[RMDB]
RNA sequence: GGGAACGACUCGAGUAGAGUCGAAAAGAAACUGGAGAUAAGGGGGACUGCUGUACUCUGAUUUUUACUGAACUGUCACAUAUUGCAGGCUCACUGGAGUUCUAUGUUACUGGGACAUACAAACACUAUGUGAAUGGGGCAGCCAGGAAUUCGCUCAUAUGAGUAAUGCUUUCGAGCAUUACUCAUAAAAAGAAACAACAACAACAAC
Reactivity to DMS in 0.01 (KOAc 150mM, MgCl2 10mM, bicine 150mM(pH8.5), 24C), signal-to-noise 2, nucleotides 027 to 156: g020a090a040a070c030u000g010g000a100g020a140u000a080a110g010g010g020g040g030a120c070u000g020c020u000g030u000a080c060u000c060u010g010a020u000u010u000u000u010a220c050u020g020a080a040c050u010g000u000c020a060c030a070u000a120u000u000g010c020a070g020g000c080u000c040a070c090u000g020g000a130g010u010u010c050u040a030u000g020u000u000a110c080u000g030g130g020a040c040a080u000a070c100a080a080a080c040a020c060u020a000u000g060u000g010a050a090u000g000g010g040g010c040a070g000c010c010a050g000g000a040a140u000u000c070g000c040u010c040a220
Reactivity to 2A3 in 0.01 (KOAc 150mM, MgCl2 10mM, bicine 150mM(pH8.5), 24C), signal-to-noise 2, nucleotides 027 to 156: g050a020a100a010c070u060g040g000a050g030a060u080a070a150g030g020g000g020g000a010c050u030g010c020u030g020u070a080c020u050c020u070g080a110u060u070u080u090u110a080c040u030g060a120a020c020u050g020u050c030a010c010a070u100a060u080u110g000c010a010g030g050c050u040c010a060c110u060g030g010a020g000u090u000c060u070a050u060g040u070u050a020c020u020g020g050g000a010c010a020u100a000c020a020a130a010c060a010c060u110a000u110g030u010g040a040a090u040g010g000g000g000c010a010g010c020c010a020g000g000a030a040u060u070c040g040c060u020c090a020